[RMDB]
RNA sequence: GGGAACGACUCGAGUAGAGUCGAAAACGAUCAGUCUUCGGACUGAUCGAAAUAAACUUGACAAACGCCGGUCAAGAAAAACGGCUUAAUAAGAUAGCUGAAAAAGUGGCGGGUUCGCCCGCCACAACGUGUGUUCAUAGUUCGCUAUGAACACACGAAAAGAAACAACAACAACAAC
Reactivity to 2A3 in 0.01 (KOAc 150mM, MgCl2 10mM, bicine 150mM(pH8.5), 24C), signal-to-noise 1, nucleotides 027 to 126: c000g000a000u000c010a010g000u030c000u000u090c240g140g010a000c000u010g010a000u000c000g000a000a000a000u050a030a100a010c000u020u000g010a000c000a020a230a010c130g090c020c060g030g030u010c020a020a080g140a050a050a010a020a020c000g000g060c000u090u070a090a030u170a300a090g070a150u070a000g000c000u000g100a030a000a020a080a160g020u000g010g000c000g020g000g020u050u030c110g020c060c010c000g040c000c000a000c000a000a000